Notes:
This 207-nucleotide RNA was probed chemically with 2A3 and DMS. The DMS profile rests on 4,422 reads. The 2A3 profile rests on 1,184 reads. For DMS the reverse transcriptase was MarathonRT.

RNA sequence: GGGAACGACUCGAGUAGAGUCGAAAAGAAAUUCCCGAUCGGCGGUAAAGUCCGCGAGCCGAACGAAAAAGGUUUGGCAGGAACGGGUGAGAUUCCGGUACCGACAGUAUAGUCUGGAUGGAAGAAGGUAGCCUCCUCUCGUUCGCGAGAGGAGGAACAUAAGUCGCAAGUUCGCUUGCGACUUAUGAAAAGAAACAACAACAACAAC
Reactivity to 2A3 in 0.01 (KOAc 150mM, MgCl2 10mM, bicine 150mM(pH8.5), 24C), signal-to-noise 2, nucleotides 027 to 156: g010a000a040a010u030u020c000c000c010g000a240u080c040g020g010c010g040g000u040a030a030a010g020u040c010c050g000c000g010a000g010c000c000g040a010a000c030g130a150a050a040a020a080g130g000u000u020u020g010g000c020a000g000g030a010a010c080g100g000g030u030g010a040g000a010u040u010c030c010g030g000u040a080c020c000g010a010c030a010g050u100a060u080a260g100u020c080u070g080g040a110u090g060g030a070a050g010a040a030g130g030u070a020g030c000c000u000c000c000u000c000u010c000g060u060u010c270g010c000g060a000g000a000g010g010a000g000g000a000a000
Reactivity to DMS in 0.01 (KOAc 150mM, MgCl2 10mM, bicine 150mM(pH8.5), 24C), signal-to-noise 2, nucleotides 027 to 156: g010a080a080a170u000u000c010c010c030g020a080u000c050g010g000c030g030g050u000a060a080a280g000u000c000c030g020c000g000a140g030c000c010g000a010a190c010g010a010a150a120a210a190g010g020u000u000u000g040g020c020a090g050g020a090a050c010g020g000g030u010g000a220g000a300u010u000c030c000g010g000u010a040c010c020g000a040c040a140g000u020a090u000a090g020u000c040u000g060g000a120u000g020g020a110a100g000a090a090g000g020u020a100g020c020c000u000c000c000u000c000u000c000g040u000u000c240g040c020g000a020g030a060g000g020a000g000g000a010a040